[RMDB]
RNA sequence: GGGAACGACUCGAGUAGAGUCGAAAAGACCACCGCGUGAUGGACUACUUCAUCAAGCUGAUCAAGAAGAAGUACAAGGUGGACAUCAGCAAGGAUAACCGUGCCCUCCAGAAGCUGCGCCGCGAGGGUACAUUACUUUGUUCGCAAAGUAAUGUACAAAAGAAACAACAACAACAAC
Reactivity to 2A3 in 0.01 (KOAc 150mM, MgCl2 10mM, bicine 150mM(pH8.5), 24C), signal-to-noise 9, nucleotides 027 to 126: g040a030c010c000a010c030c020g030c030g050u080g060a060u080g010g050a030c050u060a040c020u090u030c010a070u030c030a060a070g090c080u100g060a110u180c100a090a060g060a050a010g020a040a010g090u050a070c050a090a080g060g010u040g030g010a020c010a040u050c020a000g060c030a040a080g070g020a100u070a130a050c030c020g030u070g030c010c000c000u010c010c010a030g020a090a010g030c040u060g030c020g010c020c010g030c030g020a050g050g050
Reactivity to DMS in 0.01 (KOAc 150mM, MgCl2 10mM, bicine 150mM(pH8.5), 24C), signal-to-noise 9, nucleotides 027 to 126: g010a200c030c010a080c060c050g020c170g010u000g010a060u000g010g010a090c150u000a080c050u000u000c030a050u010c050a080a160g010c090u000g010a070u000c130a100a130g000a080a060g000a060a040g010u000a050c110a070a140g010g020u000g000g000a100c080a050u000c030a040g010c050a080a090g010g000a090u010a080a080c080c040g020u000g010c020c000c010u000c020c040a090g000a090a090g010c050u000g010c070g010c020c040g010c110g010a060g000g010